[RMDB]
RNA sequence: GGGAACGACUCGAGUAGAGUCGAAAAAGAACAGUUUAGAGAAAAUCCUUGAUUUUUGUACAUUUGUAGAAAAAUCAUGUACAUCAUAUGUAGAUACCGCUAAGUCACUUUUUCUGAAUUUGGAUUGUUAAAAUGUAAACAUCGUGAAGGCAGGAACAUAUUCCCGUCUAUUCGUAGACGGGAAUAUAAAAGAAACAACAACAACAAC
Reactivity to DMS in 0.01 (KOAc 150mM, MgCl2 10mM, bicine 150mM(pH8.5), 24C), signal-to-noise 2, nucleotides 027 to 156: a100g010a100a140c020a050g000u000u040u000a100g000a120g040a100a100a150a050u000c060c020u000u000g010a000u000u000u000u000u040g010u000a000c010a300u000u000u000g030u000a030g000a020a020a020a010a040u000c030a020u000g020u000a040c030a070u000c060a150u000a300u000g010u000a090g020a140u010a100c030c070g010c070u000a060a070g010u010c040a070c060u000u000u000u000u010c020u000g000a040a090u000u000u010g010g010a160u000u000g000u000u000a090a040a110a070u020g000u020a110a020a090c090a030u000c070g000u000g010a030a100g000g000c020a020g030g000a050a130c120
Reactivity to 2A3 in 0.01 (KOAc 150mM, MgCl2 10mM, bicine 150mM(pH8.5), 24C), signal-to-noise 1, nucleotides 027 to 156: a000g060a060a030c060a020g030u080u110u100a040g000a000g020a010a080a100a100u000c040c000u000u000g040a070u050u030u040u160u100g100u080a020c010a170u130u210u300g020u030a020g100a000a120a000a000a000u060c010a040u040g020u030a080c000a040u050c010a000u080a050u150g060u030a030g000a100u100a080c000c030g000c020u000a080a000g080u090c020a020c030u120u100u030u110u030c070u040g080a150a090u070u140u020g070g000a090u040u000g000u040u150a100a220a020a020u040g000u060a210a000a000c000a010u060c060g050u010g090a000a010g010g000c080a000g080g000a010a010c060

Chemical mapping of a 207-nucleotide RNA with DMS and 2A3. It was measured as part of the RMDB library OK3TST. Reactivities are given for positions 27 through 156.